[RMDB]
RNA sequence: GGGAACGACUCGAGUAGAGUCGAAAAAUGGUAGUUAGUCUACUCGCUAUCCUAGUUACUUUGGAGUAAUCUAAAGUGUGUGUAAACGGGCGGAAGUCUGUAAAAUACUGGGGACAUAGGGUCAACAAGAACUAGUAGACCUUCGGGUCUACUAGAAGUAAAAGGGUAAGUUCGCUUACCCUUUUACAAAAGAAACAACAACAACAAC
Reactivity to DMS in 0.01 (KOAc 150mM, MgCl2 10mM, bicine 150mM(pH8.5), 24C), signal-to-noise 3, nucleotides 027 to 156: a120u010g010g020u000a040g020u000u010a120g040u010c010u000a030c010u020c080g020c070u010a090u010c010c000u010a120g020u000u000a030c010u000u000u000g010g010a070g020u020a130a160u000c020u000a020a030a030g010u010g030u000g030u000g010u010a050a140a070c030g020g020g030c020g040g020a080a170g020u000c020u000g020u000a040a070a060a100u000a050c040u020g010g000g010g030a060c080a110u010a090g010g020g020u010c060a070a120c080a060a090g000a080a200c010u000a010g000u000a010g010a040c000c000u000u000c270g070g040g040u000c000u000a010c010u000a010g000a020a130
Reactivity to 2A3 in 0.01 (KOAc 150mM, MgCl2 10mM, bicine 150mM(pH8.5), 24C), signal-to-noise 3, nucleotides 027 to 156: a000u060g010g010u020a040g030u130u030a050g020u080c000u030a070c010u030c020g050c020u050a070u140c020c000u040a040g020u070u080a010c020u020u020u030g010g010a010g040u090a100a160u020c010u020a020a000a040g010u020g010u010g000u000g030u070a100a110a070c020g010g010g000c020g000g040a060a030g010u020c010u040g050u060a000a150a010a010u080a040c030u010g020g000g020g000a010c030a040u080a050g050g050g020u070c000a020a030c020a060a110g100a070a030c020u000a000g000u000a000g000a000c000c030u020u030c140g070g000g000u000c010u000a000c000u000a000g000a000a000
Structure probing data (DMS and 2A3) for a 207-nucleotide construct. It was measured as part of the RMDB library M2RFPK. Values cover nucleotides 27 to 156. The reactions ran in a buffer of 150 mM KOAc, 10 mM MgCl2 and 150 mM bicine (pH 8.5), at 24 C.